[RMDB]
RNA sequence: GGGAACGACUCGAGUAGAGUCGAAAACGGUGGAGUGCACGAAGUCGAGGAAAGUGCACAACUCGACGAUUUUUUUUUCGUCUAGCGACGUCGAAGGCGAAGACGGAAGCCGAGCUAGGUGCGCCGAGGGAUGGUGUGCGUUCGCGCGCGCCGUCCCAAAAGAAACAACAACAACAAC
Reactivity to DMS in 0.01 (KOAc 150mM, MgCl2 10mM, bicine 150mM(pH8.5), 24C), signal-to-noise 8, nucleotides 027 to 126: c060g000g030u000g000g000a130g010u000g010c050a050c060g000a120a150g020u010c060g020a060g010g010a070a080a190g010u000g010c050a020c030a070a070c040u000c010g000a040c020g010a000u000u010u010u000u030u010u020u010u010c010g000u000c010u010a170g000c030g000a130c160g010u030c070g000a100a070g000g010c010g000a070a050g000a030c060g000g000a070a080g000c070c030g000a100g010c070u010a060g010g010u010g000c040g000c010c040g010a150
Reactivity to 2A3 in 0.01 (KOAc 150mM, MgCl2 10mM, bicine 150mM(pH8.5), 24C), signal-to-noise 9, nucleotides 027 to 126: c020g020g010u060g020g080a110g010u060g020c020a010c060g040a160a050g080u090c040g020a060g020g120a170a070a030g050u070g030c020a010c000a030a040c000u000c010g020a020c010g020a030u100u010u000u000u000u010u010u050u040c010g010u000c010u020a050g030c040g110a130c060g070u190c060g100a110a030g090g010c030g000a030a020g020a010c030g000g030a020a010g010c010c010g020a010g040c040u090a060g010g080u030g030c030g010c010c010g040a150
Chemical mapping of a 177-nucleotide RNA with DMS and 2A3.
2A3 adducts were read by reverse transcription with SuperScript II with manganese.
The reactions ran in a buffer of 150 mM KOAc, 10 mM MgCl2 and 150 mM bicine (pH 8.5), at 24 C.
Source: RMDB library OK1LIB, as collected in RNAgym.
For DMS, 30,824 sequencing reads were counted.